Structure probing data (2A3 and DMS) for a 177-nucleotide construct. 2A3 adducts were read by reverse transcription with SuperScript II with manganese. Source: RMDB library TTRDEL, as collected in RNAgym. The RNA was probed in 150 mM KOAc, 10 mM MgCl2 and 150 mM bicine (pH 8.5) at 24 C. Values cover nucleotides 27 to 126.
RNA sequence: GGGAACGACUCGAGUAGAGUCGAAAAGAUAUGGAGAUUCCUAGUAUCCAACAGCUCGGAAACGAGACAUGGAUAGUAGGAGAUCUCCUAAGUCAAACAAGUAAAAGGCUUCGGCCUUUUACUUGAAGAACGACUAAAUCUUCGGAUUUAGUCGUUCAAAAGAAACAACAACAACAAC
Reactivity to 2A3 in 0.01 (KOAc 150mM, MgCl2 10mM, bicine 150mM(pH8.5), 24C), signal-to-noise 1, nucleotides 027 to 126: g020a020u080a060u150g000g000a000g000a010u000u060c000c000u060a040g210u030a020u000c020c020a050a070c060a190g090c000u000c020g010g070a070a080a070c000g020a000g060a060c040a140u080g000g010a020u010a030g180u000a000g020g020a050g030a000u000c010u020c000c000u000a110a010g050u020c010a040a120a200c000a040a000g000u000a000a000a020a000g010g000c010u130u240c300g060g000c010c030u050u010u010u000a000c000u000u010g000a000a000
Reactivity to DMS in 0.01 (KOAc 150mM, MgCl2 10mM, bicine 150mM(pH8.5), 24C), signal-to-noise 2, nucleotides 027 to 126: g000a020u000a300u010g020g020a000g000a010u000u000c000c000u000a020g000u000a000u000c000c000a020a110c140a220g020c000u010c000g000g010a110a120a230c000g020a010g010a010c100a120u020g010g000a010u000a020g000u000a000g000g000a050g000a010u000c000u000c000c000u000a000a060g000u000c010a150a150a270c020a000a000g010u000a000a010a000a010g000g000c000u000u000c260g010g010c000c000u000u010u000u000a000c000u000u000g000a080a060